An RNA of 177 nucleotides, treated with 2A3 and DMS and read out base by base. The data come from the RNA Mapping Database (RMDB), library OK2TST. The RNA was probed in 150 mM KOAc, 10 mM MgCl2 and 150 mM bicine (pH 8.5) at 24 C. For DMS the reverse transcriptase was MarathonRT. For DMS, 877 sequencing reads were counted.
RNA sequence: GGGAACGACUCGAGUAGAGUCGAAAAUAAUGCCAUAGACAAUCGUGGCAUCCACAUCACUCUCGGCUGGCUGGGAGAACAGAACUUUUUUCGCGCCCUGUUGCAGAUGAAUCUCUGCGCUGGCCCGAACCCAUCGGUUAUUCGUAACCGAUGGGUUAAAAGAAACAACAACAACAAC
Reactivity to 2A3 in 0.01 (KOAc 150mM, MgCl2 10mM, bicine 150mM(pH8.5), 24C), signal-to-noise 1, nucleotides 027 to 126: u120a000a070u060g000c000c010a040u100a050g130a030c150a070a250u230c210g010u040g000g000c000a000u090c050c010a110c010a070u190c050a040c010u070c000u020c020g060g000c030u090g120g000c040u040g030g000g010a080g040a010a040c050a050g130a050a040c020u000u070u000u030u220u140c000g010c010g010c010c020c000u060g110u140u080g000c000a010g000a010u060g100a200a090u060c040u040c000u070g010c000g030c040u040g010g000c000c080c030g020
Reactivity to DMS in 0.01 (KOAc 150mM, MgCl2 10mM, bicine 150mM(pH8.5), 24C), signal-to-noise 2, nucleotides 027 to 126: u020a130a040u000g000c000c010a010u000a120g040a200c200a070a080u000c160g040u000g010g060c010a030u000c010c030a140c230a090u010c140a110c050u000c020u000c040g010g000c110u000g010g070c010u010g040g000g010a050g000a050a110c140a080g000a060a060c170u000u000u000u000u000u000c030g060c290g000c040c010c110u010g010u000u010g010c000a040g000a060u000g030a130a170u030c210u000c010u000g020c010g030c000u000g000g010c010c010c000g000